This 177-nucleotide RNA was probed chemically with 2A3 and DMS. The data come from the RNA Mapping Database (RMDB), libraries RFM100 and RFMREP. For DMS the reverse transcriptase was MarathonRT.
[RMDB]
RNA sequence: GGGAACGACUCGAGUAGAGUCGAAAAUUCCUUUUAUCGUCAACCCAGAGCCCCACCGCGGCUAAUGCAAGAGGCCAAAAAAUGUUUGGAGGAAGAAAAACAAAGGCAGGAAGUGGCGGCGGCCUGAACAUAACUCUGAUUUCGAUCAGAGUUAUGUAAAAGAAACAACAACAACAAC
Reactivity to 2A3 in 0.01 (KOAc 150mM, MgCl2 10mM, bicine 150mM(pH8.5), 24C), signal-to-noise 5, nucleotides 027 to 126: u020u000c020c000u060u020u080u110a220u110c090g080u050c030a050a040c040c010c000a020g010a020g030c000c020c010c000a030c020c020g010c030g080g000c040u050a070a010u060g010c020a040a050g040a060g140g010c020c030a020a030a000a010a040a040u190g090u060u050u040g040g010a040g060g020a050a040g060a070a100a030a010a000c100a050a080a020g090g000c020a000g070g030a110a020g010u050g100g010c000g000g010c000g000g010c000c020u010g000a010
Reactivity to DMS in 0.01 (KOAc 150mM, MgCl2 10mM, bicine 150mM(pH8.5), 24C), signal-to-noise 5, nucleotides 027 to 126: u010u000c010c000u000u020u020u020a050u020c050g010u010c070a090a090c070c050c010a100g010a120g000c020c010c000c060a070c040c040g020c040g010g000c010u020a060a060u020g010c070a090a100g000a190g010g000c010c020a000a010a070a100a130a070u030g010u020u000u000g000g010a120g020g010a100a130g010a070a070a040a050a060c080a080a110a100g030g010c010a040g020g010a120a080g030u000g000g030c010g010g030c080g000g010c020c020u020g010a100